Structure probing data (DMS and 2A3) for a 177-nucleotide construct. It was measured as part of the RMDB library OK2TST. Values are in units of 0.01, from 0 to 300, in steps of 10.

RNA sequence: GGGAACGACUCGAGUAGAGUCGAAAACUGAUCUGGCGCCGCGUCCGCGUAGUAGGAAAACGCCUCGAAUAGGUCGUCUUCAACCCCGUUAUGGACGCGCAGCCUGCGCGUCAUCCGAGCCGGGCGCGCGUAAGACCAAUUUCGAUUGGUCUUACGCAAAAGAAACAACAACAACAAC
Reactivity to DMS in 0.01 (KOAc 150mM, MgCl2 10mM, bicine 150mM(pH8.5), 24C), signal-to-noise 2, nucleotides 027 to 126: c040u010g010a110u000c060u010g010g030c050g020c130c080g020c020g030u000c000c000g040c070g020u000a070g020u000a150g010g020a060a020a040a060c020g000c030c030u000c210g000a120a130u010a090g010g000u010c010g020u000c050u000u010c030a100a160c020c040c030c020g000u000u020a080u010g010g010a000c010g020c020g000c050a110g020c160c150u020g020c020g020c000g000u000c030a050u000c100c030g010a120g030c110c040g030g020g010c030g000c050
Reactivity to 2A3 in 0.01 (KOAc 150mM, MgCl2 10mM, bicine 150mM(pH8.5), 24C), signal-to-noise 2, nucleotides 027 to 126: c000u030g020a130u070c020u080g070g000c040g020c010c030g020c030g020u050c000c000g000c060g060u040a030g020u010a010g040g120a010a040a030a020c030g020c060c020u040c120g080a110a080u090a210g020g070u130c050g030u000c050u070u040c030a050a230c050c020c000c030g030u030u100a140u300g090g020a020c010g010c010g000c040a040g130c010c070u040g000c020g020c000g060u000c000a060u080c070c030g060a030g070c090c030g030g000g000c050g000c030